[RMDB]
RNA sequence: GGGAACGACUCGAGUAGAGUCGAAAAAGGGCCUCCAGGUCCGCUAUUCGACCACAUGCCUUUUGGAGAUGAUCAUGGCCGGGCCGGGGAAGCGAAGAGCUUCCAAGAUUUGUGUCAGUCCUGCCGCAUGGAAUCCCUGAUUCGUCAGGGAUUCCAUAAAAGAAACAACAACAACAAC
Reactivity to DMS in 0.01 (KOAc 150mM, MgCl2 10mM, bicine 150mM(pH8.5), 24C), signal-to-noise 2, nucleotides 027 to 126: a040g000g010g020c000c030u070c050c070a230g000g000u010c020c060g000c130u010a040u050u030c040g040a050c020c000a110c070a060u070g020c020c040u020u050u080u050g020g000a040g000a090u010g000a130u040c060a050u000g000g010c050c080g000g000g090c010c050g040g000g000g000a060a000g030c010g000a070a090g000a300g000c000u000u010c020c000a080a090g020a060u030u010u010g010u030g000u000c040a110g010u010c000c020u000g000c040c020g000c180
Reactivity to 2A3 in 0.01 (KOAc 150mM, MgCl2 10mM, bicine 150mM(pH8.5), 24C), signal-to-noise 2, nucleotides 027 to 126: a000g020g010g030c000c000u010c030c050a030g000g030u010c010c000g010c030u110a100u010u060c060g010a060c040c000a020c010a070u080g090c010c000u210u190u080u250g090g000a130g010a100u090g000a010u040c040a080u110g020g000c060c000g060g000g000c000c000g040g000g000g000a040a010g020c000g010a100a070g030a010g070c000u020u000c000c000a010a000g070a010u070u090u160g150u080g030u040c040a030g010u000c000c000u000g010c040c010g090c010
The record gives the reactivity of an RNA of 177 nucleotides to DMS and 2A3.
The RNA was probed in 150 mM KOAc, 10 mM MgCl2 and 150 mM bicine (pH 8.5) at 24 C.
The 2A3 profile rests on 1,144 reads.
It was measured as part of the RMDB library RFM100.
DMS adducts were read by reverse transcription with MarathonRT.